[RMDB]
RNA sequence: GGGAACGACUCGAGUAGAGUCGAAAAAUACAUACUGACACCGGUUGCUCAACAGGGUGUGUGGGACAAUAGAAUAACAAGGCUGUCAAUUUGAGCUUGACGGCUGCAAACCGAAUGGAGUGAAAUCGUAACCGGACUCACUUCGGUGAGUCCGGAAUCAUUUAUGCGUCUUCGGACGCAUAAAUGAAAAAGAAACAACAACAACAAC
Reactivity to DMS in 0.01 (KOAc 150mM, MgCl2 10mM, bicine 150mM(pH8.5), 24C), signal-to-noise 2, nucleotides 027 to 156: a090u000a050c030a070u010a100c060u010g030a100c010a090c010c010g020g030u000u000g020c040u020c060a080a110c040a140g030g000g000u000g000u000g010u000g000g010g050a140c100a100a080u000a120g000a090a120u010a070a070c080a090a160g020g000c010u000g000u010c000a010a040u000u000u000g010a160g020c300u000u000g010a010c030g040g000c000u010g010c060a050a080a130c040c000g000a060a140u020g010g000a110g000u000g020a050a080a060u000c050g010u000a100a150c020c000g000g020a040c000u000c000a030c000u000u010c300g050g010u000g000a020g030u000c020c010g010g000a000a020
Reactivity to 2A3 in 0.01 (KOAc 150mM, MgCl2 10mM, bicine 150mM(pH8.5), 24C), signal-to-noise 1, nucleotides 027 to 156: a010u130a000c020a020u120a040c050u040g110a040c020a040c030c000g090g000u040u070g000c020u070c090a080a040c050a240g090g000g000u040g000u010g040u080g050g030g020a020c040a050a150u120a160g070a090a030u150a130a020c040a050a040g020g000c020u000g000u020c020a000a000u040u080u230g050a030g010c010u010u040g010a010c010g000g000c020u010g000c010a050a080a070c130c040g000a070a030u070g090g010a020g060u100g150a040a030a020u130c050g010u080a120a020c000c040g030g000a000c000u000c010a020c000u060u000c180g020g000u000g020a020g000u020c000c000g010g000a000a000

Description
Structure probing data (DMS and 2A3) for a 207-nucleotide construct. The reactions ran in a buffer of 150 mM KOAc, 10 mM MgCl2 and 150 mM bicine (pH 8.5), at 24 C. The DMS profile rests on 3,100 reads. High DMS reactivity at an A or C suggests that its Watson-Crick edge is free.